[RMDB]
RNA sequence: GGGAACGACUCGAGUAGAGUCGAAAAGUGGACGCUGCCUGGCCAGCGGCAGACCGCGCUGCGCGUCAGGAACGGCGCCACCCGCGCCGUACGCGCUAUCUGGCGCGCCGGCCGGCGCGCUUCGCGACCACCAUAUUAGUUUCGACUAAUAUGGUGGAAAAGAAACAACAACAACAAC
Reactivity to DMS in 0.01 (KOAc 150mM, MgCl2 10mM, bicine 150mM(pH8.5), 24C), signal-to-noise 4, nucleotides 027 to 126: g020u000g010g010a120c060g000c010u000g030c010c010u010g030g020c020c050a260g020c030g000g000c100a100g020a130c160c110g000c120g020c090u000g000c010g000c120g000u000c040a060g000g010a090a090c040g020g000c000g000c010c070a090c170c100c100g000c050g030c000c020g000u010a060c040g000c030g000c050u010a050u020c200u000g000g010c080g050c020g040c300c300g000g000c080c040g040g020c110g050c110g030c070u000u010c020g020c030g010a300
Reactivity to 2A3 in 0.01 (KOAc 150mM, MgCl2 10mM, bicine 150mM(pH8.5), 24C), signal-to-noise 2, nucleotides 027 to 126: g050u040g000g060a020c040g010c040u090g000c020c060u090g070g000c030c020a020g000c000g000g020c020a020g100a140c050c050g000c000g010c030u040g020c020g000c020g050u040c060a090g020g060a060a070c010g000g000c000g010c000c000a100c010c020c000g000c010g000c010c010g100u110a060c060g020c000g000c040u030a070u060c080u120g050g020c050g000c020g010c220c020g070g040c040c010g000g000c000g000c010g000c090u010u030c000g010c000g030a040